[RMDB]
RNA sequence: GGGAACGACUCGAGUAGAGUCGAAAACGGUGAAACUCUCGAUCCUACAGGCCAAGAAGUAAUGGGUGUAGUUAUUAACAUGCGUAAAGGAUUUUACCGUCUAGCAGUUUGGACCAAGAGUUGCAACAAUCGUGAAGUGCUUAUGGAAAUUGGUACAAGCUCAUAGUCAUUUCGAUGACUAUGAGCUAAAAGAAACAACAACAACAAC
Reactivity to DMS in 0.01 (KOAc 150mM, MgCl2 10mM, bicine 150mM(pH8.5), 24C), signal-to-noise 1, nucleotides 027 to 156: c030g000g010u030g010a050a110a050c040u000c020u000c040g000a190u010c050c020u000a140c080a100g020g000c010c040a080a140g010a300a190g000u020a070a050u000g010g010g030u000g040u000a110g060u000u000a070u010u000a090a060c060a080u000g030c010g000u010a070a070a090g030g020a140u000u020u000u020a030c080c000g000u000c020u000a080g020c060a050g000u010u010u010g040g010a130c030c000a040a040g000a120g000u010u030g000c060a070a040c060a020a130u000c000g070u000g000a060a080g000u000g000c020u030u000a150u000g010g000a020a070a120u000u000g020g020u020a090c060a140
Reactivity to 2A3 in 0.01 (KOAc 150mM, MgCl2 10mM, bicine 150mM(pH8.5), 24C), signal-to-noise 3, nucleotides 027 to 156: c040g000g000u070g020a040a030a000c070u060c030u050c040g000a050u010c000c020u040a010c030a060g140g060c040c020a080a050g080a140a030g060u230a160a030u060g010g030g000u030g000u020a010g000u030u100a110u120u120a070a040c060a090u130g040c030g000u080a080a110a080g030g030a050u010u020u000u120a060c020c000g020u030c040u040a040g000c050a010g020u060u080u030g020g000a000c020c000a030a010g000a040g120u080u070g000c030a040a060c010a040a120u030c030g040u030g060a050a010g030u010g040c030u130u110a060u070g060g070a050a180a110u090u050g020g040u060a020c040a060
Background: Chemical mapping of a 207-nucleotide RNA with DMS and 2A3. For 2A3 the reverse transcriptase was SuperScript II with manganese. The reactions ran in a buffer of 150 mM KOAc, 10 mM MgCl2 and 150 mM bicine (pH 8.5), at 24 C. For 2A3, 1,223 sequencing reads were counted. The data come from the RNA Mapping Database (RMDB), library OK3TST. Values cover nucleotides 27 to 156.